An RNA of 177 nucleotides, treated with DMS and 2A3 and read out base by base. The 2A3 profile rests on 53,509 reads. The DMS profile rests on 149,637 reads. The data come from the RNA Mapping Database (RMDB), library OK1LIB. Values cover nucleotides 27 to 126. The RNA was probed in 150 mM KOAc, 10 mM MgCl2 and 150 mM bicine (pH 8.5) at 24 C.
[RMDB]
RNA sequence: GGGAACGACUCGAGUAGAGUCGAAAAAGGCUAGAAGCUAGCAGGCGGCUGUUGGCUCGAACCGUAUGGGCUAGCAGCGAGGUCAGCACUGCUAGUCUUGUGGCUAUAGCAGUCAGCAGCUUCUGAGGGCCCGGGCGUGGUUCGCCAUGUUUGGGCCAAAAGAAACAACAACAACAAC
Reactivity to DMS in 0.01 (KOAc 150mM, MgCl2 10mM, bicine 150mM(pH8.5), 24C), signal-to-noise 9, nucleotides 027 to 126: a080g000g010c010u000a030g010a070a050g010c020u000a030g020c020a080g000g000c060g000g010c000u000g000u000u000g000g010c000u000c010g010a100a150c060c070g010u020a030u010g000g000g010c000u000a010g010c000a010g000c040g000a070g010g010u030c090a070g010c020a120c000u000g000c000u000a000g000u000c000u000u000g000u020g000g000c040u010a100u030a130g010c080a030g010u000c020a020g000c030a030g000c020u000u000c000u010g000a300g000
Reactivity to 2A3 in 0.01 (KOAc 150mM, MgCl2 10mM, bicine 150mM(pH8.5), 24C), signal-to-noise 9, nucleotides 027 to 126: a000g070g000c010u040a020g030a150a030g080c020u060a030g020c020a020g030g040c030g010g000c010u010g010u050u020g020g020c010u010c030g040a110a070c040c010g020u070a140u240g010g000g000c000u000a000g000c000a000g000c020g050a050g030g120u180c040a010g020c030a020c050u000g000c000u000a000g000u030c000u000u040g040u030g010g000c010u030a010u090a100g030c030a000g020u030c010a010g000c010a000g000c010u010u000c010u020g020a050g030